This 207-nucleotide RNA was probed chemically with 2A3 and DMS.
The reactions ran in a buffer of 150 mM KOAc, 10 mM MgCl2 and 150 mM bicine (pH 8.5), at 24 C.
RNA sequence: GGGAACGACUCGAGUAGAGUCGAAAAUUGCGUCAGGCAUGCGAAAGGAUGGACGAGCGCAGGAGCGCCUACUAGGCGGCCGGAUGGGAAAGCAUGCGAUUACCGUUGCCUAGGAUGGGAAAGCAUGCAGCAUGCGAAAGGAUGGAACGGUGCAUGCCGUGCAUCAGACUUUCGAGUCUGAUGCACGAAAAGAAACAACAACAACAAC
Reactivity to 2A3 in 0.01 (KOAc 150mM, MgCl2 10mM, bicine 150mM(pH8.5), 24C), signal-to-noise 2, nucleotides 027 to 156: u100u080g000c000g050u060c020a020g000g110c070a020u090g020c010g090a120a030a000g070g020a090u090g020g030a030c050g040a020g010c020g000c040a030g010g020a050g080c040g040c000c000u070a190c070u100a090g050g000c020g000g010c040c000g080g020a060u050g050g020g000a060a110a000g000c000a000u000g000c000g010a000u070u070a010c000c000g040u040u010g080c000c060u050a130g180g010a050u120g030g040g000a080a000a000g030c000a000u010g020c000a000g000c000a000u060g010c000g020a080a090a020g050g030a090u110g070g040a030a080c020g010g040u030g000c000a000u030g000c010
Reactivity to DMS in 0.01 (KOAc 150mM, MgCl2 10mM, bicine 150mM(pH8.5), 24C), signal-to-noise 1, nucleotides 027 to 156: u010u000g020c010g070u000c120a100g010g000c020a100u000g020c070g040a210a070a090g000g060a040u030g080g000a010c070g000a160g000c060g000c040a160g040g000a110g030c040g000c010c000u030a140c070u000a060g000g080c100g000g000c000c030g000g000a140u010g030g070g000a040a180a220g020c000a000u000g000c010g010a150u000u000a260c060c000g080u000u010g020c100c120u010a080g060g000a020u000g000g000g050a200a040a240g000c000a040u000g020c000a070g030c020a160u000g000c010g000a030a070a080g030g000a100u000g000g030a100a170c050g030g000u020g040c010a000u000g000c040